[RMDB]
RNA sequence: GGGAACGACUCGAGUAGAGUCGAAAAGAUAUGGAUUGACUUGACAUGAGGGUCGGAAACGAUGGCCCUCAACAGCAAGCAAUCCUAAGUCAAAACGUCCUACGUGCCUUCGGGCACGUAGGACGAACAAUAGGGACGUGUUCGCACGUCCCUAUUGAAAAGAAACAACAACAACAAC
Reactivity to 2A3 in 0.01 (KOAc 150mM, MgCl2 10mM, bicine 150mM(pH8.5), 24C), signal-to-noise 3, nucleotides 027 to 126: g020a000u060a050u150g000g020a020u030u060g200a300c000u010u000g040a140c020a140u080g000a000g020g010g000u040c080g130g110a230a260a010c160g100a150u300g030g000c010c000c010u010c000a000a000c010a000g040c000a000a010g000c000a000a020u010c000c000u030a130a020g090u040c020a000a030a100a130c020g010u000c010c010u000a000c000g000u010g030c000c000u050u140c300g040g000g030c020a000c020g000u000a020g000g030a000c000g010a000a000
Reactivity to DMS in 0.01 (KOAc 150mM, MgCl2 10mM, bicine 150mM(pH8.5), 24C), signal-to-noise 3, nucleotides 027 to 126: g010a030u000a300u000g000g000a010u000u000g010a150c000u000u010g010a030c070a230u000g000a020g000g040g020u000c010g050g000a080a180a120c280g020a120u010g010g000c000c000c000u000c010a010a020c170a120g000c000a020a010g000c010a000a030u000c000c010u010a020a070g010u000c030a100a060a080a210c030g010u000c000c000u000a000c000g010u000g000c000c000u010u010c230g030g010g010c000a000c000g000u000a000g000g000a000c010g000a010a050
About this RNA: This 177-nucleotide RNA was probed chemically with 2A3 and DMS. The DMS profile rests on 3,213 reads. The data come from the RNA Mapping Database (RMDB), library TTRDEL. The RNA was probed in 150 mM KOAc, 10 mM MgCl2 and 150 mM bicine (pH 8.5) at 24 C. DMS (dimethyl sulfate) methylates the pairing face of unpaired adenines and cytosines. The 2A3 profile rests on 4,715 reads.